Chemical mapping of a 177-nucleotide RNA with DMS.
[RMDB]
RNA sequence: GGGAACGACUCGAGUAGAGUCGAAAAGUCAAGAUGUGUAGGAUAGGUGGGAGGCUUUGAAGUGUGGACGCCAGUCUGCAUGGAGCCGACCUUGAAAUACCACCCAUUAAUGGAAAAACAAAGUGAAGAAUCAAACGAGGUUCGCCUCGUUUGAUUCAAAAGAAACAACAACAACAAC
Reactivity to DMS in 0.01 (KOAc 150mM, MgCl2 10mM, bicine 150mM(pH8.5), 24C), signal-to-noise 1, nucleotides 027 to 126: g000u000c010a080a210g010a020u000g020u000g000u000a000g000g000a020u000a020g020g020u010g000g000g000a050g050g030c010u020u000u020g000a070a110g010u010g020u000g010g010a030c000g000c030c250a050g020u010c000u000g010c020a000u000g010g000a020g000c000c000g010a070c300c040u000u000g010a050a020a060u000a060c000c020a000c000c000c010a010u010u000a080a150u010g000g000a030a070a040a050a060c110a040a020a170g010u000g020a090a160
It was measured as part of the RMDB library M2PK90.